[RMDB]
RNA sequence: GGGAACGACUCGAGUAGAGUCGAAAAGCCGAUGAAUUGCCGAGAAGCCUGGCUCGAAAUCGUCGACGCAUCGACGACGGUCCUGCCAUGAGACCGUAACGAGGACAAGUCGCCUCGAAUGGCGUCGUAUAACAUGAGUGGUUCGCCACUCAUGUAAGAUAGCAGCAAGUUUCGACUUGCUGCUAUCAAAAGAAACAACAACAACAAC
Reactivity to 2A3 in 0.01 (KOAc 150mM, MgCl2 10mM, bicine 150mM(pH8.5), 24C), signal-to-noise 4, nucleotides 027 to 156: g050c030c030g000a040u110g050a050a240u150u120g000c020c010g030a040g000a170a050g040c020c080u110g040g000c030u050c040g070a110a080a030u010c000g010u010c000g010a040c050g010c160a120u090c010g000a000c000g010a020c010g000g000u000c000c010u060g000c020c000a020u040g030a030g000a080c000c000g030u080a010a000c000g000a000g000g010a020c060a170a050g030u120c060g070c010c000u000c000g000a000a020u020g020g040c000g000u020c050g000u060a080u030a240a000c000a010u010g000a000g000u000g010g050u070u080c130g020c050c000a000c000u000c000a000u000g000u000a000a020
Reactivity to DMS in 0.01 (KOAc 150mM, MgCl2 10mM, bicine 150mM(pH8.5), 24C), signal-to-noise 1, nucleotides 027 to 156: g020c000c010g000a090u010g020a100a130u000u000g000c010c030g000a120g000a130a070g010c020c010u000g000g060c020u000c000g000a030a100a070u000c030g000u000c020g000a080c100g030c110a190u000c000g000a070c000g010a080c000g040g020u000c000c010u020g020c000c160a150u000g030a060g000a000c050c040g030u000a080a080c040g030a050g010g010a290c040a170a110g020u000c090g040c020c000u000c010g000a100a110u000g000g030c010g010u000c030g030u040a090u000a020a070c000a010u000g000a030g040u000g000g010u010u000c300g000c010c000a030c000u010c010a000u000g000u000a010a110